[RMDB]
RNA sequence: GGGAACGACUCGAGUAGAGUCGAAAAGUACAUUACCACAUCGUCGUAACUUAUCCAACACAUGAUGAGGUGGAGAGGAUGACUGCUAUGGCCUCGACCCCUGCUGAGCAGCACCCAUGGUUCACCUUUCUGCUCACGAUUGAAUCGGCGAUGCUAAAGAGGGAGGUAUAUUCGUAUACCUCCCUCUAAAAGAAACAACAACAACAAC
Reactivity to DMS in 0.01 (KOAc 150mM, MgCl2 10mM, bicine 150mM(pH8.5), 24C), signal-to-noise 2, nucleotides 027 to 156: g040u010a090c070a100u000u010a160c040c120a100c040a030u000c010g050u000c020g030u010a080a220c090u000u010a070u010c030c070a070a170c170a080c080a080u010g000a030u000g040a080g020g030u010g040g030a170g000a160g030g000a120u000g000a130c060u000g000c010u000a120u010g050g050c030c040u010c050g010a290c030c030c000c040u000g020c010u000g000a070g010c020a020g000c010a050c000c000c050a090u010g020g030u010u000c010a020c040c010u000u000u000c020u010g020c030u000c020a100c150g010a100u000u000g020a070a230u000c050g020g010c020g010a040u000g030c020u020a090a110
Reactivity to 2A3 in 0.01 (KOAc 150mM, MgCl2 10mM, bicine 150mM(pH8.5), 24C), signal-to-noise 2, nucleotides 027 to 156: g030u070a030c030a180u030u220a070c020c000a040c000a000u000c030g020u000c020g020u010a050a120c020u130u120a040u160c090c030a140a100c080a060c010a120u230g010a040u060g020a030g140g020u070g020g010a030g000a000g010g030a170u060g020a160c000u050g000c000u000a150u200g020g000c000c120u230c220g080a300c020c030c000c070u070g070c010u140g050a000g040c010a000g000c000a060c020c000c050a020u090g080g070u010u020c000a060c000c000u000u000u020c000u000g020c000u040c000a090c060g010a080u010u060g080a060a080u040c020g000g000c040g000a020u000g000c000u050a160a000
Notes:
Conditions: 150 mM KOAc, 10 mM MgCl2 and 150 mM bicine (pH 8.5), 24 C. Structure probing data (DMS and 2A3) for a 207-nucleotide construct. The DMS profile rests on 3,492 reads. The data come from the RNA Mapping Database (RMDB), library OK3TST.